[RMDB]
RNA sequence: GGGAACGACUCGAGUAGAGUCGAAAAUAUACACACAUAUACACAGGCACCCGGGCAUGCUGACACCUCAUGCAUACAUUCACACAAGUGUGCACACACUUAGGAGAUUCCCAGGGCAAAAAGGUGGCAACGUACUUGAGUUCGCUCAAGUACGUUGAAAAGAAACAACAACAACAAC
Reactivity to DMS in 0.01 (KOAc 150mM, MgCl2 10mM, bicine 150mM(pH8.5), 24C), signal-to-noise 4, nucleotides 027 to 126: u010a080u020a080c070a050c080a040c080a050u000a060u010a070c100a050c100a050g000g020c080a070c070c080c030g000g000g030c050a040u000g020c030u010g020a100c080a040c040c040u010c060a070u010g000c030a080u010a060c040a080u000u010c060a090c110a100c110a020a030g010u000g010u000g020c110a070c120a040c040a020c020u020u010a070g000g000a100g010a130u010u000c010c000c000a150g010g010g020c080a010a030a040a050a030g000g000u000g000g000
Reactivity to 2A3 in 0.01 (KOAc 150mM, MgCl2 10mM, bicine 150mM(pH8.5), 24C), signal-to-noise 1, nucleotides 027 to 126: u130a000u070a010c050a000c000a000c010a040u060a000u060a230c060a030c010a060g060g000c020a040c020c000c060g000g000g000c020a010u070g010c020u050g030a010c010a020c020c000u040c000a030u020g010c010a000u060a080c020a060u090u140c060a030c010a010c000a180a030g030u000g000u060g070c030a000c010a000c000a010c040u050u030a070g030g080a060g030a050u050u000c000c000c000a020g030g070g000c060a010a040a040a000a020g100g000u040g020g030

Conditions: 150 mM KOAc, 10 mM MgCl2 and 150 mM bicine (pH 8.5), 24 C. The record gives the reactivity of an RNA of 177 nucleotides to DMS and 2A3. For 2A3, 2,973 sequencing reads were counted. For 2A3 the reverse transcriptase was SuperScript II with manganese. DMS (dimethyl sulfate) methylates the pairing face of unpaired adenines and cytosines. The data come from the RNA Mapping Database (RMDB), library OK2TRN.